[RMDB]
RNA sequence: GGGAACGACUCGAGUAGAGUCGAAAAAGGAACGUUCGCGUUCCUACAAAGGGGUCUGCGGCGAAGAGGCUUUUGACGAGCUGAAGCCUCCACGGCUCGAUAAGCUCCCCACCUUCGCGCAGACGGAGGCACCCGGCGCAGGUCAUUCGUGACCUAAGUCCAUUCACUUAUUCGUAAGUGAAUGGACAAAAGAAACAACAACAACAAC
Reactivity to DMS in 0.01 (KOAc 150mM, MgCl2 10mM, bicine 150mM(pH8.5), 24C), signal-to-noise 1, nucleotides 027 to 156: a030g000g000a030a020c020g030u010u010c270g010c010g100u000u010c000c000u000a000c120a060a130a110g050g020g050g030u000c060u000g000c000g020g000c020g000a090a070g000a200g020g030c050u000u010u000u000g010a160c080g020a040g020c040u000g000a050a140g000c000c010u000c000c040a300c040g000g000c000u000c000g000a170u010a020a110g010c010u020c240c000c120c060a300c100c000u070u000c040g030c010g040c110a020g010a010c000g000g000a000g090g020c030a210c020c000c040g000g010c040g070c110a100g000g030u010c000a130u000u010c100g060u010g010a080c020c000u000a070a080
Reactivity to 2A3 in 0.01 (KOAc 150mM, MgCl2 10mM, bicine 150mM(pH8.5), 24C), signal-to-noise 3, nucleotides 027 to 156: a020g030g000a010a000c010g010u040u090c260g020c010g090u000u000c050c000u010a040c010a000a160a010g120g030g040g000u000c000u000g030c020g210g040c020g040a000a000g040a060g100g010c020u060u030u110u210g230a100c030g000a010g000c000u020g000a060a010g010c010c000u000c000c010a020c020g000g000c000u000c000g020a080u040a120a020g000c010u140c080c020c000c000a040c010c010u000u000c010g000c000g000c020a000g000a000c000g000g000a000g000g000c010a030c000c010c000g110g000c170g020c130a020g000g000u020c010a020u070u080c210g150u060g010a010c000c000u020a090a060